[RMDB]
Chemical mapping of a 177-nucleotide RNA with 2A3. Conditions: 150 mM KOAc, 10 mM MgCl2 and 150 mM bicine (pH 8.5), 24 C. It was measured as part of the RMDB library OK1LIB. Reactivities are given for positions 27 through 126. 2A3 adducts were read by reverse transcription with SuperScript II with manganese. The 2A3 profile rests on 697 reads.
RNA sequence: GGGAACGACUCGAGUAGAGUCGAAAACAAGACUCUAAGAGAUCCUGUCAUUUACAGAUGUAAUCUAACCCCUCACCACAGAACCGGAUCAACUUGGAAGAUCUACCCAACUUAUGAUUUCUGUGUAACGUGCAUGCCAUUUCGAUGGCAUGCACGUAAAAGAAACAACAACAACAAC
Reactivity to 2A3 in 0.01 (KOAc 150mM, MgCl2 10mM, bicine 150mM(pH8.5), 24C), signal-to-noise 2, nucleotides 027 to 126: c000a020a010g000a010c050u000c000u000a000a020g020a000g000a060u000c000c000u040g010u020c160a230u040u150u150a220c130a070g120a150u130g060u150a200a140u010c040u040a120a170c010c020c040c000u030c020a050c000c030a060c040a040g050a080a010c040c030g000g000a000u000c010a020a140c070u000u040g040g000a080a030g010a080u000c000u020a040c000c000c000a060a080c050u020u060a060u190g160a260u080u040u020c090u000g110u010g050u120a090